[RMDB]
RNA sequence: GGGAACGACUCGAGUAGAGUCGAAAAUGAUCGAUAAGGCCUUGGAGAAAGGCAUCAACUUCCAGGUUUGCCAUGAUACUUGUGUAGUGCAGCCAGGUGAAUUGGUCACCAAGUCCUCAGGUAAACAAUUUGCCGUCUUCUCGCCAUGGUACAGAGCCUCACCACUAUGCUUCGGCAUAGUGGUGAGAAAAGAAACAACAACAACAAC
Reactivity to 2A3 in 0.01 (KOAc 150mM, MgCl2 10mM, bicine 150mM(pH8.5), 24C), signal-to-noise 1, nucleotides 027 to 156: u080g010a040u100c030g050a040u030a050a080g030g000c000c000u070u080g040g000a080g000a000a170a080g030g000c000a030u080c000a000a070c000u170u030c030c020a010g080g000u020u080u030g000c050c090a100u100g020a010u010a090c010u120u010g080u050g010u290a090g020u030g110c040a000g030c090c040a060g070g010u100g060a110a050u050u030g030g030u080c040a000c040c000a030a010g060u150c000c030u000c010a000g000g000u020a030a030a030c010a020a070u020u040u030g010c000c000g000u060c000u030u000c030u000c030g030c060c050a020u030g000g010u070a110c070a030g190a050g010c000

Conditions: 150 mM KOAc, 10 mM MgCl2 and 150 mM bicine (pH 8.5), 24 C. Structure probing data (2A3) for a 207-nucleotide construct. The 2A3 profile rests on 452 reads. For 2A3 the reverse transcriptase was SuperScript II with manganese. It was measured as part of the RMDB library OK3TST.